[RMDB]
RNA sequence: GGGAACGACUCGAGUAGAGUCGAAAAGAUUAUGUGGGAGAUGCGCCCAGUCGUGUCACUGGAAACAGAAUUGCGAGUCGCUCGCGCUAGCGAUAUUGAUGUGUACUGUAGCGUACACUGUGCUACUUUAAGGUAUUAUGACGAUACCACGUCAAAAAUUUUAGUAUCGAUUCGUCGAUACUAAAAUAAAAGAAACAACAACAACAAC
Reactivity to 2A3 in 0.01 (KOAc 150mM, MgCl2 10mM, bicine 150mM(pH8.5), 24C), signal-to-noise 8, nucleotides 027 to 156: g040a030u140u140a060u210g040u070g020g020g010a090g010a040u050g010c000g000c010c010c020a010g020u070c060g050u050g050u130c020a010c030u020g020g020a080a070a060c070a060g090a130a100u120u180g030c030g020a020g030u030c000g010c020u010c010g060c020g000c060u020a010g000c010g020a020u020a110u090u150g070a090u050g020u020g020u030a030c030u050g100u260a030g050c020g050u030a020c030a010c060u060g040u090g020c010u010a040c020u060u090u110a090a050g030g000u050a040u100u030a130u170g040a010c020g000a000u010a030c020c030a020c030g040u020c010a010a050a010a010
Reactivity to DMS in 0.01 (KOAc 150mM, MgCl2 10mM, bicine 150mM(pH8.5), 24C), signal-to-noise 4, nucleotides 027 to 156: g010a140u010u000a050u000g020u000g010g020g010a090g010a120u000g020c040g010c110c020c030a060g030u000c030g020u000g020u000c060a100c030u000g020g000a170a080a200c060a110g010a070a120u010u010g010c020g000a080g000u000c030g020c020u000c020g010c060g030c060u010a050g020c020g010a080u000a060u010u010g010a090u000g020u000g020u000a030c050u000g030u000a110g020c060g020u000a050c030a060c060u020g020u000g010c020u000a060c050u000u010u000a070a120g010g020u000a040u000u000a110u010g010a120c080g010a100u000a090c040c010a100c080g000u010c030a020a060a070a090
Background
Structure probing data (2A3 and DMS) for a 207-nucleotide construct. The data come from the RNA Mapping Database (RMDB), library OK3TST. For 2A3, 6,727 sequencing reads were counted.